Chemical mapping of a 207-nucleotide RNA with 2A3 and DMS.
It was measured as part of the RMDB library M2RFPK.
For 2A3 the reverse transcriptase was SuperScript II with manganese.
The DMS profile rests on 4,829 reads.
The 2A3 profile rests on 3,243 reads.
Conditions: 150 mM KOAc, 10 mM MgCl2 and 150 mM bicine (pH 8.5), 24 C.

RNA sequence: GGGAACGACUCGAGUAGAGUCGAAAAAGUUAGGUUCGCUAUGGUGCAACUCUUUAAGGCAAUAACGAACUAAUUCUAAGCAAGUCAUGGAGAAAUGCCAGGGUCACUAUCUAGCCAUAAUAGUGCUGUAAGUGACUUAGAUUCGUCUAAGUCACAAACCAUGCAUAGACUUCGGUCUAUGCAUGGUAAAAGAAACAACAACAACAAC
Reactivity to 2A3 in 0.01 (KOAc 150mM, MgCl2 10mM, bicine 150mM(pH8.5), 24C), signal-to-noise 5, nucleotides 027 to 156: a000g070u080u060a030g000g080u040u030c020g010c030u050a020u070g100g040u070g060c050a140a140c030u100c080u200u210u190a130a050g020g020c020a050a110u040a120a010c040g020a010a000c010u030a010a030u130u070c050u090a020a070g040c030a000a080g060u110c030a050u140g040g020a090g040a100a100a030u080g010c020c000a010g010g030g010u040c010a000c020u010a060u100c030u060a040g020c000c000a010u050a110a060u060a100g050u050g020c030u030g040u110a150a060g010u010g000a000c000u000u000a000g000a000u030u020c030g010u010c110u000a000a000g000u000c000a000c000a030a000
Reactivity to DMS in 0.01 (KOAc 150mM, MgCl2 10mM, bicine 150mM(pH8.5), 24C), signal-to-noise 2, nucleotides 027 to 156: a060g010u000u000a070g000g010u010u000c040g050c020u000a040u000g030g040u000g000c030a090a120c110u000c140u000u000u000a090a060g060g000c020a110a070u000a040a060c010g000a020a050c000u000a040a040u010u010c050u000a090a130g000c050a060a150g010u000c030a090u000g000g000a120g000a070a080a070u000g010c010c030a090g010g010g010u000c020a070c020u010a040u000c060u000a090g060c010c050a070u010a070a080u000a070g020u010g030c030u000g050u000a050a190g040u000g010a020c000u000u000a010g010a070u000u000c280g020u000c000u000a000a010g010u000c000a010c000a030a070